[RMDB]
RNA sequence: GGGAACGACUCGAGUAGAGUCGAAAAGAACGGCAGAGAGCCGAGAAAUGAGACGAGGUAGAGCGCGCGCUCUACCAAAAGUUGUGUGUAAAAACGCACGUGUAGGCGCGGCUACACACCUCAAGAAGAUUAGUGCAGGUUUCGACCUGCACUAAUCAAAAGAAACAACAACAACAAC
Reactivity to 2A3 in 0.01 (KOAc 150mM, MgCl2 10mM, bicine 150mM(pH8.5), 24C), signal-to-noise 4, nucleotides 027 to 126: g040a110a030c010g010g000c030a030g100a020g040a020g260c030c020g000a030g060a010a120a060u300g030a050g040a040c200g010a020g020g020u080a030g030a010g040c160g010c040g010c030g000c210u130c040u080a000c000c000a010a010a010a010g100u180u100g000u000g000u000g020u050a030a040a020a050a050c000g020c000a020c040g080u130g030u060a030g000g000c000g000c000g000g000c010u260a050c030a000c000a000c040c000u000c020a030a050g080a070a000
Reactivity to DMS in 0.01 (KOAc 150mM, MgCl2 10mM, bicine 150mM(pH8.5), 24C), signal-to-noise 2, nucleotides 027 to 126: g050a140a130c000g000g030c000a160g030a100g000a210g010c000c030g000a190g010a140a060a050u060g010a150g020a120c210g000a040g000g020u000a120g000a040g030c000g030c010g020c080g000c010u080c000u000a010c010c050a010a010a070a130g000u070u020g000u000g000u000g000u000a070a170a060a130a090c000g010c020a000c040g010u040g000u020a010g000g000c010g030c000g030g000c010u010a070c080a240c130a050c000c000u000c020a060a040g010a110a080